[RMDB]
RNA sequence: GGGAACGACUCGAGUAGAGUCGAAAAGAUAUGGAUCGCACUGGCGACGAUCACAGGUCUCGGAAACGAGACUGUGGGAGCCAAACGAUCCUAAGUCAAAACGUGGGAUCCUUCGGGAUCCCACGAACCUAUACUCAGACUUCGGUCUGAGUAUAGGAAAAGAAACAACAACAACAAC
Reactivity to DMS in 0.01 (KOAc 150mM, MgCl2 10mM, bicine 150mM(pH8.5), 24C), signal-to-noise 4, nucleotides 027 to 126: g000a020u000a100u010g000g010a020u000c000g010c090a210c300u000g010g010c000g010a090c300g010a040u010c000a010c010a070g030g010u000c000u000c000g020g010a020a020a020c020g020a010g000a020c000u000g040u000g000g010g010a030g040c000c000a040a140a280c010g000a010u000c000c000u000a010a060g000u000c020a170a050a120a220c020g040u000g000g000g010a000u010c000c000u000u010c190g030g000g010a010u010c010c000c000a000c000g000a010a020
Reactivity to 2A3 in 0.01 (KOAc 150mM, MgCl2 10mM, bicine 150mM(pH8.5), 24C), signal-to-noise 3, nucleotides 027 to 126: g010a000u020a020u060g010g000a010u000c010g020c080a070c260u020g010g000c020g100a300c050g010a090u000c000a000c000a020g250g100u010c000u000c000g020g000a050a020a000c000g010a000g000a010c000u010g000u000g000g010g010a020g000c000c010a060a040a000c000g000a000u000c000c000u000a040a000g020u010c020a000a020a130a200c010g000u010g000g000g000a000u010c020c010u080u100c300g160g020g010a000u000c010c020c000a010c000g000a000a000
Source information: Conditions: 150 mM KOAc, 10 mM MgCl2 and 150 mM bicine (pH 8.5), 24 C. Structure probing data (DMS and 2A3) for a 177-nucleotide construct. Reactivities are given for positions 27 through 126. For DMS, 3,857 sequencing reads were counted. 2A3 adducts were read by reverse transcription with SuperScript II with manganese. It was measured as part of the RMDB library TTRDES. DMS adducts were read by reverse transcription with MarathonRT.